[RMDB]
RNA sequence: GGGAACGACUCGAGUAGAGUCGAAAAAUCUUGGCGUAGUCAGCGCGGAAGGAGCGCGCAACUCCUUACCCUCGCCUUUUUUUUUCCGCUCCCGUUCGCGAAAGCGUUCAGCGGAAAAGGGACCAAAACAAUGAUAUUUCUUCGGAAAUAUCAUUGUAAAAGAAACAACAACAACAAC
Reactivity to 2A3 in 0.01 (KOAc 150mM, MgCl2 10mM, bicine 150mM(pH8.5), 24C), signal-to-noise 1, nucleotides 027 to 126: a010u060c050u030u070g010g000c020g030u040a040g120u140c100a050g070c030g020c050g060g010a030a010g010g010a020g010c070g000c030g020c090a050a150c010u000c000c010u010u100a270c010c000c010u010c010g000c000c000u060u060u020u000u030u000u000u030u020c010c000g020c010u020c020c060c020g010u000u000c020g000c000g050a120a020a020g000c000g010u000u010c020a000g000c010g000g020a000a000a000a000g020g010g010a030c070c030a000a090a010
Reactivity to DMS in 0.01 (KOAc 150mM, MgCl2 10mM, bicine 150mM(pH8.5), 24C), signal-to-noise 8, nucleotides 027 to 126: a040u010c080u000u000g010g010c020g020u000a060g010u010c150a130g010c100g020c290g010g000a060a020g000g000a020g010c010g000c240g010c190a080a100c010u000c010c000u000u010a150c040c020c030u010c040g000c000c010u000u000u000u000u000u000u000u000u000c000c010g010c000u010c120c100c070g010u000u000c000g020c010g000a090a070a160g010c000g000u000u000c030a040g010c000g000g000a000a000a010a040g010g010g000a140c100c100a050a050a070

The data come from the RNA Mapping Database (RMDB), library M2PK90. Structure probing data (2A3 and DMS) for a 177-nucleotide construct. For 2A3, 11,565 sequencing reads were counted. For DMS the reverse transcriptase was MarathonRT. Conditions: 150 mM KOAc, 10 mM MgCl2 and 150 mM bicine (pH 8.5), 24 C. 2A3 adducts were read by reverse transcription with SuperScript II with manganese.